[RMDB]
RNA sequence: GGGAACGACUCGAGUAGAGUCGAAAACGUCGUGAACUAGCGACAAUGCACUAGGUCCAUCGUUAUCUAACCGAAACAUCGUGACUAGUCGUAGAAUAGAACCAGGAGAGGUCGCUGGCAAACAAAGACGGGGUGUCUGUUUCGGCGGACGCCCCGUAAAAGAAACAACAACAACAAC
Reactivity to 2A3 in 0.01 (KOAc 150mM, MgCl2 10mM, bicine 150mM(pH8.5), 24C), signal-to-noise 8, nucleotides 027 to 126: c030g020u020c020g020u020g070a070a030c020u010a030g000c000g010a000c000a020a060u100g010c030a010c010u020a040g080g120u010c030c020a050u070c110g030u040u040a200u120c050u040a030a090c040c040g000a020a010a010c030a030u070c070g060u080g040a020c020u010a000g020u010c080g030u030a020g050a090a050u100a050g070a060a030c020c030a030g060g060a130g040a030g010g070u010c010g000c000u000g020g000c030a030a050a030c030a020a150a010g090
Reactivity to DMS in 0.01 (KOAc 150mM, MgCl2 10mM, bicine 150mM(pH8.5), 24C), signal-to-noise 7, nucleotides 027 to 126: c090g020u020c070g000u010g010a180a160c040u010a030g010c010g010a020c020a110a090u000g000c070a060c010u000a040g010g000u010c020c030a100u020c110g010u000u000a080u000c030u010a080a120c200c100g010a030a010a040c020a080u030c140g020u020g010a050c020u000a030g010u010c090g000u000a060g000a070a100u020a090g000a080a100c050c090a070g000g000a090g010a090g000g000u000c010g010c010u000g000g000c060a040a140a050c080a080a070a080g000
The data come from the RNA Mapping Database (RMDB), library OK1LIB. Structure probing data (2A3 and DMS) for a 177-nucleotide construct. DMS adducts were read by reverse transcription with MarathonRT. The RNA was probed in 150 mM KOAc, 10 mM MgCl2 and 150 mM bicine (pH 8.5) at 24 C. The DMS profile rests on 20,552 reads.